[RMDB]
RNA sequence: GGGAACGACUCGAGUAGAGUCGAAAACGGAGUCACUGCGUACGUUCUGAAGAACGGGCCAGGGAGUGUACGGCAGGGGCGAGGCUAAGGAGUGAAACUCCGAAGCCGGAGGGAAACCGACAGCCCGGCUGAUAAAUUACUUCGGUAAUUUAUCAGCAAAAGAAACAACAACAACAAC
Reactivity to 2A3 in 0.01 (KOAc 150mM, MgCl2 10mM, bicine 150mM(pH8.5), 24C), signal-to-noise 2, nucleotides 027 to 126: c020g030g010a050g010u040c010a010c060u010g000c040g010u030a000c010g010u010u040c030u140g190a240a110g030a120a050c030g030g000g020c030c020a090g030g040g000a030g020u050g000u010a040c020g080g030c040a020g040g000g000g030c010g010a060g000g000c010u020a020a010g000g010a000g000u130g130a220a080a170c000u000c020c000g000a020a000g010c000c020g000g030a010g010g010g010a070a020a000c010c010g040a040c030a020g030c020c030c010g040
Reactivity to DMS in 0.01 (KOAc 150mM, MgCl2 10mM, bicine 150mM(pH8.5), 24C), signal-to-noise 4, nucleotides 027 to 126: c080g020g000a150g030u000c030a060c010u000g030c060g010u010a050c010g020u000u000c020u020g010a160a130g000a040a080c030g000g010g010c040c020a070g010g000g020a050g020u010g020u010a050c040g020g020c030a050g000g020g000g000c030g010a140g010g010c010u020a040a300g000g010a010g020u000g020a150a050a300c010u000c000c010g000a230a060g000c000c000g000g000a160g000g000g000a060a090a100c020c030g000a090c080a150g010c010c010c020g010